[RMDB]
RNA sequence: GGGAACGACUCGAGUAGAGUCGAAAAUGGUGAUGCAUUUGUCAACUUUGGUCAGAAGUGCAGUUGAGGAGCUUGUCAUAUAGAUCUGCAGCAGUUUCCAAAGAUUCACAAAGGAAAUUAGCUAGUGGCUAAUAGCGACUUUCGAGUCGCUAUUAGCAAAAGAAACAACAACAACAAC
Reactivity to DMS in 0.01 (KOAc 150mM, MgCl2 10mM, bicine 150mM(pH8.5), 24C), signal-to-noise 2, nucleotides 027 to 126: u000g030g000u000g020a070u000g000c040a050u000u000u010g020u020c100a070a140c080u000u000u000g010g010u000c080a120g010a110a060g010u010g000c020a070g000u020u010g000a130g020g000a040g000c080u000u000g000u000c050a070u020a130u010a060g010a080u000c030u000g010c070a050g030c020a060g000u000u000u000c010c030a030a160a100g000a130u010u010c200a040c090a040a110a140g020g000a020a060a060u000u000a110g030c040u020a120g040u000g000